[RMDB]
The record gives the reactivity of an RNA of 177 nucleotides to DMS and 2A3. For 2A3, 600 sequencing reads were counted. For 2A3 the reverse transcriptase was SuperScript II with manganese.
RNA sequence: GGGAACGACUCGAGUAGAGUCGAAAAAAAUCAGGCAGGCGUUUAUAGCGCCUCGGGGGUUCGAAUCCCCCCCUCUCCGCCAGAUUGUGGUGACGCGUUGUGCCAAUGCCGCGUGAGUUUCGCCGGCUCAUGAGACGAGUUUCGACUCGUCUCAUGAAAAAGAAACAACAACAACAAC
Reactivity to DMS in 0.01 (KOAc 150mM, MgCl2 10mM, bicine 150mM(pH8.5), 24C), signal-to-noise 2, nucleotides 027 to 126: a020a050a040u000c140a080g030g010c170a050g020g010c000g000u000u000u090a030u060a130g000c000g000c000c020u000c050g020g000g010g040g000u010u040c150g000a300a090u020c000c000c000c000c000c070c020u000c030u000c020c070g000c030c010a120g020a100u000u000g000u000g000g010u010g000a030c030g010c190g040u000u020g030u030g000c140c060a080a020u020g000c060c020g020c100g000u000g000a150g000u000u000u010c000g010c020c030g020g000c070
Reactivity to 2A3 in 0.01 (KOAc 150mM, MgCl2 10mM, bicine 150mM(pH8.5), 24C), signal-to-noise 1, nucleotides 027 to 126: a000a000a000u170c010a040g000g050c000a000g000g000c040g010u010u050u050a230u160a080g010c000g050c000c010u000c000g010g000g010g000g020u010u020c030g000a020a150u030c000c000c000c000c000c000c000u020c000u000c010c000g020c020c000a010g120a210u120u170g070u010g100g000u010g050a050c030g030c060g000u000u080g030u090g050c000c010a170a040u130g010c000c000g000c050g010u030g070a090g040u000u000u050c010g000c000c010g010g010c010
The RNA was probed in 150 mM KOAc, 10 mM MgCl2 and 150 mM bicine (pH 8.5) at 24 C. For DMS, 1,679 sequencing reads were counted.